[RMDB]
RNA sequence: GGGAACGACUCGAGUAGAGUCGAAAAGGGGUCUUAUGGAGGCUGUGCGAACUUGUCAGCUCUGAAGCCUCCACGGAGCUUGGAUUUAGGAGGUAUACAGCCGAUGAAAUAAGACGGAGGCACCCAAAAGCUUGUAUGUGUUCGCACAUACAAGCAACACGUGACCUAAGUUCGCUUAGGUCACGUGAAAAGAAACAACAACAACAAC
Reactivity to 2A3 in 0.01 (KOAc 150mM, MgCl2 10mM, bicine 150mM(pH8.5), 24C), signal-to-noise 1, nucleotides 027 to 156: g000g010g050g000u010c000u010u010a000u010g010g000a020g000g000c000u000g000u000g020c070g190a280a090c090u230u250g120u280c080a020g010c000u030c020u040g090a110a000g000c000c000u000c010c000a000c010g000g020a000g060c040u130u180g060g000a100u120u220u300a220g010g010a130g000g110u070a160u010a220c000a000g000c070c020g300a300u010g000a000a040a000u010a010a010g000a000c010g010g010a000g000g000c000a000c010c000c000a050a130a000a110g010c000u000u000g010u000a000u000g030u030g010u030u100c220g040c160a000c010a000u000a000c000a000a030g000c000a000a010

Source information
Structure probing data (2A3) for a 207-nucleotide construct. For 2A3, 543 sequencing reads were counted. Conditions: 150 mM KOAc, 10 mM MgCl2 and 150 mM bicine (pH 8.5), 24 C. Reactivities are given for positions 27 through 156. The data come from the RNA Mapping Database (RMDB), library RNAMAK. For 2A3 the reverse transcriptase was SuperScript II with manganese.